[RMDB]
RNA sequence: GGGAACGACUCGAGUAGAGUCGAAAAAUAUCUUACUAGAUGAAAUUGGAAGAAAUGGUGUUGAACUUCAAAGGUACAAAGGUCUUGGAGAGAUGAAUGCAGAGCAAUUAUGGGAAACAACUAUGAAUCCUGAGACAAGAACUUUAUUACAAGUUAAGGGUACGUAAUUAUUCGUAAUUACGUACCCAAAAGAAACAACAACAACAAC
Reactivity to 2A3 in 0.01 (KOAc 150mM, MgCl2 10mM, bicine 150mM(pH8.5), 24C), signal-to-noise 1, nucleotides 027 to 156: a000u100a000u060c010u010u050a030c040u050a040g020a050u040g040a040a020a080u090u070g010g030a030a030g050a080a030a010u020g040g000u040g000u030u050g000a040a010c000u030u030c060a050a090a050g020g030u060a010c040a000a040a040g030g010u010c030u010u050g010g010a050g010a000g000a030u060g010a060a000u100g010c040a040g000a020g060c030a000a070u130u060a050u140g010g000g050a010a030a040c000a030a040c000u030a010u220g020a010a010u000c000c000u060g020a040g000a030c070a040a020g050a060a080c030u090u030u070a080u000u150a110c050a100a030g000u040u080a040a050
Reactivity to DMS in 0.01 (KOAc 150mM, MgCl2 10mM, bicine 150mM(pH8.5), 24C), signal-to-noise 1, nucleotides 027 to 156: a050u000a020u000c030u010u000a180c070u000a070g000a120u000g030a030a080a150u030u000g030g000a120a090g020a100a070a140u040g030g040u000g010u010u010g000a070a150c060u000u000c060a040a050a030g020g040u000a030c020a020a080a020g030g000u000c080u020u070g000g030a070g010a200g020a080u000g020a040a130u000g020c030a020g010a040g030c040a030a090u000u020a060u010g010g010g010a140a040a100c050a060a120c080u000a140u000g000a050a130u000c020c090u010g000a130g000a050c050a010a100g000a080a070c060u000u010u010a060u000u000a090c080a010a030g010u000u010a080a240

This 207-nucleotide RNA was probed chemically with 2A3 and DMS. For 2A3, 842 sequencing reads were counted. It was measured as part of the RMDB library OK3TST. 2A3 adducts were read by reverse transcription with SuperScript II with manganese. Reactivities are rounded to 0.1 and cut off at 0 and 3.